[RMDB]
RNA sequence: GGGAACGACUCGAGUAGAGUCGAAAAGCGUAGCGCCCGACGACGGCACCGACGUCUCCGGCGAUGAGGGAUUUGUCGGGAACAUCCCGUGUUAGCACCACAACAUCGUGUUCUGCGUACAUCGGUCGGUUCCCCUUGGGUUCGCCCAAGGGGAACCAAAAGAAACAACAACAACAAC
Reactivity to 2A3 in 0.01 (KOAc 150mM, MgCl2 10mM, bicine 150mM(pH8.5), 24C), signal-to-noise 1, nucleotides 027 to 126: g060c140g040u110a050g000c020g050c020c000c010g050a030c000g010a000c000g000g050c060a010c040c000g000a010c010g030u010c040u010c010c020g100g060c030g110a210u140g100a160g000g050g000a010u110u100u160g050u010c010g090g000g000a000a030c070a110u050c030c010c000g000u000g000u000u110a030g010c000a030c020c000a000c000a020a110c000a040u090c000g020u040g030u110u020c050u100g000c000g040u100a020c000a020u040c080g030g100u070c080

Overview:
Chemical mapping of a 177-nucleotide RNA with 2A3. The RNA was probed in 150 mM KOAc, 10 mM MgCl2 and 150 mM bicine (pH 8.5) at 24 C. 2A3 adducts were read by reverse transcription with SuperScript II with manganese.